[RMDB]
RNA sequence: GGGAACGACUCGAGUAGAGUCGAAAACGGACGGGAUUUUAGCCUGGUUGCACGUUUACCCAUUUCGUGCUGGGUCCUGGACCCAUUUAAGAUGAUAGAAAUAUUAUCGAUUUCUUUACCGUCCGGAAGGCAUCACGUAGUUCGCUACGUGAUGCCUAAAAGAAACAACAACAACAAC
Reactivity to DMS in 0.01 (KOAc 150mM, MgCl2 10mM, bicine 150mM(pH8.5), 24C), signal-to-noise 2, nucleotides 027 to 126: c010g000g000a030c020g010g000g010a180u010u000u000u010a090g020c160c060u010g010g040u000u010g040c010a000c000g000u000u000u010a140c020c060c080a150u000u010u000c010g030u000g000c020u000g020g000g000u000c030c220u000g040g000a040c000c010c000a050u000u000u000a110a150g000a010u000g010a020u000a000g000a100a140a130u000a030u000u000a040u020c000g020a240u000u010u000c080u020u000u000a150c010c000g000u010c010c000g000g000a070